[RMDB]
An RNA of 207 nucleotides, treated with DMS and 2A3 and read out base by base. The RNA was probed in 150 mM KOAc, 10 mM MgCl2 and 150 mM bicine (pH 8.5) at 24 C. For DMS the reverse transcriptase was MarathonRT. It was measured as part of the RMDB library OK3TST. Reactivities are rounded to 0.1 and cut off at 0 and 3.
RNA sequence: GGGAACGACUCGAGUAGAGUCGAAAACUGCAGGUCAACGGUGCGUCUUCAGAUCAGCUAUUGCAGAAGAAAGGUCAGCCAAGCGCUCUGGGCCCGUGCGACUGUAUAUAGGAGCUUCUGAUUUCAACCAGAAGCUAACUCUCUCCGAAACAAUGAGUAUCCAUUUACGAUUCGUCGUAAAUGGAUAAAAAGAAACAACAACAACAAC
Reactivity to DMS in 0.01 (KOAc 150mM, MgCl2 10mM, bicine 150mM(pH8.5), 24C), signal-to-noise 3, nucleotides 027 to 156: c070u000g010c030a060g010g000u010c020a080a070c040g030g010u010g020c050g010u000c050u020u010c000a140g010a070u000c020a160g030c030u000a060u000u000g010c010a150g020a110a120g000a050a100a100g010g020u030c010a130g000c080c050a060a120g030c070g000c070u000c030u000g020g000g000c010c020c020g000u000g000c030g010a120c010u010g020u000a060u010a130u010a120g060g010a090g010c000u010u000c000u000g010a010u000u020u010c150a090a060c060c000a010g010a030a040g000c010u000a010a040c030u000c070u000c030u010c000c060g010a160a140a050c070a080a090u020g000a150g020
Reactivity to 2A3 in 0.01 (KOAc 150mM, MgCl2 10mM, bicine 150mM(pH8.5), 24C), signal-to-noise 5, nucleotides 027 to 156: c040u020g020c030a040g030g200u040c020a010a020c030g000g070u140g040c100g090u040c040u150u160c020a010g000a110u040c050a060g030c040u120a150u210u110g010c040a030g020a230a030g110a120a200a030g090g060u110c040a020g000c040c040a040a010g000c010g010c050u000c010u010g010g010g000c000c000c000g010u030g050c090g010a020c010u000g050u030a060u010a010u040a150g080g050a000g000c000u000u000c000u000g080a150u150u210u250c070a080a040c030c000a000g000a010a000g000c000u000a030a010c000u000c010u020c000u000c020c050g070a070a060a070c080a060a110u100g000a010g060